[RMDB]
An RNA of 177 nucleotides, treated with 2A3 and DMS and read out base by base.
The RNA was probed in 150 mM KOAc, 10 mM MgCl2 and 150 mM bicine (pH 8.5) at 24 C.

RNA sequence: GGGAACGACUCGAGUAGAGUCGAAAAUAACGGACUAGGAAACUCGAUCUUUUAAGUGGUAUUCCUAGCGAAUCCACGGCGAGGAAACUAGGACACUAACCAUGUGAUCCCGGACGCUAGAAGAAAAACGUAGUCUAAUAUUCGUAUUAGACUACGUAAAAGAAACAACAACAACAAC
Reactivity to 2A3 in 0.01 (KOAc 150mM, MgCl2 10mM, bicine 150mM(pH8.5), 24C), signal-to-noise 7, nucleotides 027 to 126: u120a040a030c080g010g040a030c010u010a010g000g070a090a120a040c010u020c020g070a170u120c160u050u300u090u170a260a070g010u020g020g030u110a060u030u020c010c000u020a070g010c040g010a000a010u010c000c000a010c000g030g000c010g000a000g000g040a070a040a050c000u010a010g000g020a000c020a000c050u050a050a030c020c030a050u120g030u020g050a090u030c010c010c000g020g030a030c040g000c080u070a060g030a170a030g060a060a190a010a010
Reactivity to DMS in 0.01 (KOAc 150mM, MgCl2 10mM, bicine 150mM(pH8.5), 24C), signal-to-noise 9, nucleotides 027 to 126: u010a080a120c120g000g000a130c010u000a010g010g000a100a130a210c010u000c020g010a130u010c070u010u010u010u010a080a140g020u000g010g000u000a040u000u000c020c010u020a090g020c110g010a050a040u000c000c000a020c020g010g010c030g010a010g000g000a070a090a150c010u000a020g010g010a090c050a050c060u000a070a130c150c160a090u000g010u000g000a120u000c010c000c010g000g010a090c070g010c050u000a040g010a180a100g000a070a060a040a080

DMS adducts were read by reverse transcription with MarathonRT.
For 2A3 the reverse transcriptase was SuperScript II with manganese.